[RMDB]
RNA sequence: GGGAACGACUCGAGUAGAGUCGAAAAGGCUCAGGACGAACGCUGGCGGCGUGCCUAAUACAUGCAAGUAGAACGCUGAGGACUGGUGCUUGCACCGGUCCAAGGAGUUGCGAACGGGUGAGUAACGAGGCGAACAGGUUUUCGAACCUGUUCGCCUAAAAGAAACAACAACAACAAC
Reactivity to DMS in 0.01 (KOAc 150mM, MgCl2 10mM, bicine 150mM(pH8.5), 24C), signal-to-noise 1, nucleotides 027 to 126: g000g010c020u000c030a030g040g060a060c090g000a050a140c090g020c020u000g000g050c060g010g020c060g060u000g010c070c040u000a110a080u010a080c140a060u000g010c100a060a090g000u000a060g000a090a100c050g020c000u000g010a300g000g000a020c010u000g030g000u000g050c000u030u020g040c050a010c000c000g030g000u000c000c040a000a040g030g000a020g010u000u000g000c030g020a300a140c140g010g020g030u000g020a060g050u000a040a140c110g010